RNA sequence: GGGAACGACUCGAGUAGAGUCGAAAACACCGGGCUGCUGGCGCUCUACCAGCUGACCUCCGAGGGCGCGUGGCUGACGGCGGCUACCGGAUUGCUGGACACCGCGGUGGCGCAUUUCGGCGACCCGGGUGAGAAGGACGUUCGCGUCCUUCUCACCAAAAGAAACAACAACAACAAC
Reactivity to DMS in 0.01 (KOAc 150mM, MgCl2 10mM, bicine 150mM(pH8.5), 24C), signal-to-noise 1, nucleotides 027 to 126: c110a180c030c010g000g020g020c010u000g010c000u010g010g010c010g020c020u010c110u010a110c020c060a040g010c010u000g000a170c160c080u000c030c010g010a120g000g010g010c010g050c020g020u010g000g060c070u020g010a070c030g000g000c030g000g030c060u030a080c030c010g000g000a140u010u000g010c010u000g000g000a270c100a080c060c030g000c110g030g010u000g010g030c020g020c020a230u000u010u000c030g000g000c000g000a090c010c000c010g000
Reactivity to 2A3 in 0.01 (KOAc 150mM, MgCl2 10mM, bicine 150mM(pH8.5), 24C), signal-to-noise 1, nucleotides 027 to 126: c020a040c010c000g000g030g010c020u030g000c000u050g050g030c030g060c040u110c030u090a060c000c000a020g060c000u010g090a070c020c000u020c020c050g000a170g010g050g020c100g000c020g020u120g110g000c090u100g100a070c070g000g300c000g050g040c040u020a210c020c020g040g020a100u020u230g010c010u040g010g020a060c020a030c120c050g000c040g090g030u040g060g000c030g000c010a060u070u220u120c030g020g030c020g010a040c000c000c040g040